Source: RMDB library OK1LIB, as collected in RNAgym. Structure probing data (2A3 and DMS) for a 177-nucleotide construct. The reactions ran in a buffer of 150 mM KOAc, 10 mM MgCl2 and 150 mM bicine (pH 8.5), at 24 C. For 2A3 the reverse transcriptase was SuperScript II with manganese.

RNA sequence: GGGAACGACUCGAGUAGAGUCGAAAAGGACGAAGGGGAGAGGGGAAAAGCACUCUGCUGUAACCAACGACAGAACCUGAGGCUACUUGGGUAACAUUAUGCACCUAGUAUCCCUUUGUGCGGUUUAAAACCCAGUGACGUUCGCGUCACUGGGUUUAAAAGAAACAACAACAACAAC
Reactivity to 2A3 in 0.01 (KOAc 150mM, MgCl2 10mM, bicine 150mM(pH8.5), 24C), signal-to-noise 1, nucleotides 027 to 126: g040g040a000c040g080a030a010g070g000g000g000a100g000a000g030g000g000g000a040a000a000a000g000c090a160c000u000c000u040g100c000u010g000u070a130a080c060c040a060a000c050g160a000c000a040g030a010a060c050c000u060g040a160g040g090c000u040a000c010u180u040g060g070g020u090a020a000c000a170u280u300a110u300g040c000a000c040c000u070a000g010u000a080u000c000c000c010u000u020u000g000u000g130c060g070g070u080u070u230a060
Reactivity to DMS in 0.01 (KOAc 150mM, MgCl2 10mM, bicine 150mM(pH8.5), 24C), signal-to-noise 1, nucleotides 027 to 126: g000g010a080c020g000a040a030g000g000g030g010a040g000a300g000g020g020g000a020a080a050a030g080c040a040c020u000c010u000g020c000u000g000u030a080a220c160c140a030a090c090g000a060c100a000g030a050a020c020c180u000g030a050g000g000c190u010a020c100u000u020g000g030g000u000a020a090c080a050u060u000a180u030g020c180a050c000c010u000a000g000u050a100u010c000c040c000u020u020u020g000u000g000c070g000g000u010u000u010a060